[RMDB]
RNA sequence: GGGAACGACUCGAGUAGAGUCGAAAAGAAGAUAAGAUACCAGACACCGUGGGCAGAUGACAAGAAAGUCCGUCGGUGUCGGUAAGGUCGUCAGUCACAGGCGACCGUUUUCUGUGACUUUAAAGAACGUACGGUCAGCAUUCGUGCUGACCGUACGAAAAGAAACAACAACAACAAC
Reactivity to DMS in 0.01 (KOAc 150mM, MgCl2 10mM, bicine 150mM(pH8.5), 24C), signal-to-noise 2, nucleotides 027 to 126: g010a010a030g000a090u040a090a100g020a170u040a000c050c000a230g090a000c010a000c000c000g010u000g000g010g000c010a060g000a160u060g000a080c300a210a140g010a190a130a080g000u000c000c000g000u020c010g040g020u000g000u000c000g010g010u000a030a080g010g020u000c010g020u000c030a080g060u030c300a180c220a080g010g000c020g010a000c040c000g000u020u040u000u030c000u000g000u000g000a210c020u000u020u000a050a040a050g000a080a090
Reactivity to 2A3 in 0.01 (KOAc 150mM, MgCl2 10mM, bicine 150mM(pH8.5), 24C), signal-to-noise 2, nucleotides 027 to 126: g070a000a000g020a000u180a120a010g030a040u030a120c000c050a010g000a000c000a000c000c000g040u040g050g000g000c020a000g100a160u130g090a220c030a110a190g090a010a000a000g020u000c000c030g010u110c050g020g000u020g000u000c000g000g000u000a000a020g030g000u020c000g000u000c000a100g110u060c100a020c000a150g000g030c000g030a010c000c000g000u120u000u000u000c000u020g110u130g140a060c000u040u180u200a080a240a130g140a120a000